Structure probing data (DMS and 2A3) for a 177-nucleotide construct. Reactivities are given for positions 27 through 126. Source: RMDB library OK2TST, as collected in RNAgym. Conditions: 150 mM KOAc, 10 mM MgCl2 and 150 mM bicine (pH 8.5), 24 C.
RNA sequence: GGGAACGACUCGAGUAGAGUCGAAAAUUUCAGCACUUCCACCGAGCCGUCCUUGCGGCAUACCUCGUUGCGGCCCGUUUCGCCCGGCUUGCCUCCUUUGAGCCCGAAGGGGCGCACACGGCGAUGAUCGGUACGAUUAGUUCGCUAAUCGUACCGAAAAAGAAACAACAACAACAAC
Reactivity to DMS in 0.01 (KOAc 150mM, MgCl2 10mM, bicine 150mM(pH8.5), 24C), signal-to-noise 2, nucleotides 027 to 126: u000u020u010c080a110g010c110a070c070u000u000c040c040a100c040c030g000a110g000c030c020g020u010c070c040u010u000g040c060g000g010c040a120u000a070c060c040u000c050g010u000u000g010c070g010g010c030c010c030g020u000u000u000c020g000c040c010c060g020g040c120u000u000g000c050c030u000c020c030u020u000u000g030a110g020c020c030c000g000a080a050g000g010g020g030c080g000c020a020c120a130c220g000g000c010g010a050u010g000a090
Reactivity to 2A3 in 0.01 (KOAc 150mM, MgCl2 10mM, bicine 150mM(pH8.5), 24C), signal-to-noise 1, nucleotides 027 to 126: u030u100u060c010a010g000c010a020c040u090u000c020c020a040c070c060g020a030g010c020c020g040u020c050c060u000u120g040c020g020g010c000a030u070a020c010c010u040c060g080u050u070g050c040g050g000c000c000c010g050u010u070u030c030g000c010c040c000g000g040c030u040u070g000c010c020u080c010c010u020u040u080g060a080g050c030c020c000g000a010a030g020g040g000g000c000g000c010a030c040a000c000g020g000c010g010a010u080g040a080